RNA sequence: GGGAACGACUCGAGUAGAGUCGAAAAUAAGAAUAGAGCUCGCACUGUUGCAGGCGUGUCCAUACUUAGCACAAUGACUAAUCGCCAGUACCAUCAGAAAAUGCUUAAGUCCAUGGCUGCAACUCGUAACCUGAUCGCUUCGGCGAUCAGAAAAGAAACAACAACAACAAC
Reactivity to 2A3 in 0.01 (KOAc 150mM, MgCl2 10mM, bicine 150mM(pH8.5), 24C), signal-to-noise 4, nucleotides 027 to 129: u140a010a010g060a010a060u120a070g040a000g050c040u030c070g090c030a120c150u090g010u050u050g010c030a040g050g000c010g020u060g040u000c040c010a020u070a100c000u020u090a000g030c010a000c030a040a150u110g060a040c010u080a110a020u090c000g070c030c000a000g020u000a050c020c000a020u000c020a000g130a000a120a000a030u020g000c020u090u090a020a020g020u100c050c000a000u000g080g000c000u030g000c010a000a010c000u000c070g060u050a030a070c010
Reactivity to DMS in 0.01 (KOAc 150mM, MgCl2 10mM, bicine 150mM(pH8.5), 24C), signal-to-noise 5, nucleotides 027 to 129: u040a060a030g020a100a140u030a020g010a100g000c040u000c000g040c060a110c090u030g040u070u030g040c030a070g000g030c040g050u000g000u070c100c140a120u080a070c050u050u060a070g030c030a030c100a120a100u000g030a070c070u000a160a080u050c000g010c030c020a070g020u020a070c100c080a080u080c090a060g040a070a070a120a230u030g010c050u080u000a050a100g000u050c200c020a070u000g010g030c000u050g060c040a060a120c030u060c070g070u030a060a050c130
Annotation:
The data come from the RNA Mapping Database (RMDB), library 15KLIB. Structure probing data (2A3 and DMS) for a 170-nucleotide construct. For 2A3 the reverse transcriptase was SuperScript II with manganese. Conditions: 150 mM KOAc, 10 mM MgCl2 and 150 mM bicine (pH 8.5), 24 C.